[RMDB]
RNA sequence: GGGAACGACUCGAGUAGAGUCGAAAAGACUUUCUCAAUCACCACCAUGAGGCAGGCAUAGUCCUGAGGCUGCCUCCCUUUGGCACUGAUAGAGAUGCGGCAAAGACCAAUGAAGAUCUUGAUAAUCCCCUACAAAAUAAUUCGUUAUUUUGUAGGGAAAAGAAACAACAACAACAAC
Reactivity to DMS in 0.01 (KOAc 150mM, MgCl2 10mM, bicine 150mM(pH8.5), 24C), signal-to-noise 9, nucleotides 027 to 126: g020a110c090u000u000u010c020u000c020a130a080u000c040a070c290c070a170c050c030a060u010g010a050g010g010c100a020g000g000c030a090u000a070g010u000c020c060u000g020a100g010g010c040u000g010c020c010u000c140c080c020u010u000u000g010g010c050a120c100u010g010a060u000a070g010a060g010a040u000g010c080g000g000c070a070a050a060g000a100c030c030a070a090u010g000a090a080g000a060u000c020u000u000g010a100u010a100a170u010c100
Reactivity to 2A3 in 0.01 (KOAc 150mM, MgCl2 10mM, bicine 150mM(pH8.5), 24C), signal-to-noise 8, nucleotides 027 to 126: g020a010c030u040u070u010c020u020c000a040a050u040c010a010c060c000a020c010c010a080u110g030a030g030g000c020a000g020g020c020a080u120a100g070u060c020c080u140g040a140g110g020c010u010g010c000c000u020c010c010c000u070u040u020g020g000c030a020c080u020g010a020u030a040g040a010g010a020u050g040c050g030g020c040a140a070a050g040a100c010c010a020a020u110g020a060a040g020a130u030c020u080u080g030a040u150a160a070u100c010

Conditions: 150 mM KOAc, 10 mM MgCl2 and 150 mM bicine (pH 8.5), 24 C. An RNA of 177 nucleotides, treated with DMS and 2A3 and read out base by base. For 2A3, 18,050 sequencing reads were counted. For 2A3 the reverse transcriptase was SuperScript II with manganese. For DMS the reverse transcriptase was MarathonRT. High DMS reactivity at an A or C suggests that its Watson-Crick edge is free.